[RMDB]
RNA sequence: GGGAACGACUCGAGUAGAGUCGAAAAGAGGAUUCAACGAGCUUCGUAGCAACGAUAGCAACGUAGCUUUUGCUACGACCCAAGCUAUCGAGGGAAGCUACGUCCCCUGCUCGAGGGCAGAAUCCGACAGGAUAGUAGCGUUCGCGCUACUAUCCUGAAAAGAAACAACAACAACAAC
Reactivity to DMS in 0.01 (KOAc 150mM, MgCl2 10mM, bicine 150mM(pH8.5), 24C), signal-to-noise 3, nucleotides 027 to 126: g020a190g010g000a030u000u000c030a160a160c070g010a060g000c010u000u000c000g010u000a020g020c040a130a180c020g000a010u000a000g000c020a070a180c010g010u000a000g010c000u010u010u010u000g020c000u000a010c010g000a130c120c170c190a120a130g000c000u000a000u000c000g000a100g010g010g000a080a120g010c010u000a030c010g010u000c070c020c010c090u010g000c010u000c040g010a110g020g010g020c140a100g020a040a010u000c000c000g010a240
Reactivity to 2A3 in 0.01 (KOAc 150mM, MgCl2 10mM, bicine 150mM(pH8.5), 24C), signal-to-noise 3, nucleotides 027 to 126: g100a040g000g000a020u000u020c050a080a010c060g020a000g000c010u070u080c020g070u040a000g040c010a050a070c040g000a010u000a000g020c000a060a070c030g010u010a000g000c020u010u130u270u300g000c000u000a000c000g110a100c030c020c020a020a010g000c000u010a010u010c000g000a050g080g120g100a120a060g000c000u020a070c000g100u070c000c050c010c010u020g000c000u000c010g060a140g050g100g000c100a050g010a010a010u020c010c000g010a020
Structure probing data (DMS and 2A3) for a 177-nucleotide construct. The RNA was probed in 150 mM KOAc, 10 mM MgCl2 and 150 mM bicine (pH 8.5) at 24 C. For DMS, 2,871 sequencing reads were counted.